Chemical mapping of a 207-nucleotide RNA with 2A3 and DMS. For 2A3, 1,788 sequencing reads were counted. The data come from the RNA Mapping Database (RMDB), library OK3TST. Values cover nucleotides 27 to 156.
RNA sequence: GGGAACGACUCGAGUAGAGUCGAAAAAACGUAUAUACACCCUUUGUAUAACAUGUCACGAAUUCAGCAUAAAGGGAUCUUCAGUGAUCUAAGUCAGGGGUCAGCAACCUUUUCUAAAAAGGACCAAAUAGUAAUAUUUCAGGCUUUGUGGACCCUAAAUACGAUAAUACUUCGGUAUUAUCGUAUUAAAAGAAACAACAACAACAAC
Reactivity to 2A3 in 0.01 (KOAc 150mM, MgCl2 10mM, bicine 150mM(pH8.5), 24C), signal-to-noise 3, nucleotides 027 to 156: a000a000c130g060u140a170u020a010u020a090c010a110c010c030c000u050u110u040g110u010a150u040a090a060c050a100u100g050u080c020a010c100g060a040a060u080u060c030a060g030c030a120u130a110a040a010g030g010g030a020u010c020u070u070c040a150g050u010g110a040u000c030u080a090a000g060u030c050a050g030g020g000g000u010c020a010g020c010a010a070c000c000u030u030u060u080c090u120a130a170a040a000a020g020g000a010c040c060a020a010a050u050a030g060u060a030a150u040a110u040u100u090c050a020g050g010c020u080u040u030g060u090g060g000a000c000c000c000u010a010
Reactivity to DMS in 0.01 (KOAc 150mM, MgCl2 10mM, bicine 150mM(pH8.5), 24C), signal-to-noise 3, nucleotides 027 to 156: a060a040c060g000u000a150u000a090u000a060c040a120c080c020c020u000u000u000g030u000a090u010a060a090c070a100u000g000u010c050a200c070g010a110a140u000u000c040a090g000c100a080u000a060a080a130g010g020g020a060u000c020u000u010c160a150g020u000g000a050u000c040u000a060a110g020u010c100a070g010g010g010g020u000c000a080g010c020a070a150c010c000u010u000u000u000c140u010a060a080a060a060a050g010g010a130c030c030a020a010a040u000a060g010u020a100a150u000a050u000u000u000c070a100g030g000c040u000u000u000g020u000g020g010a080c010c000c010u000a040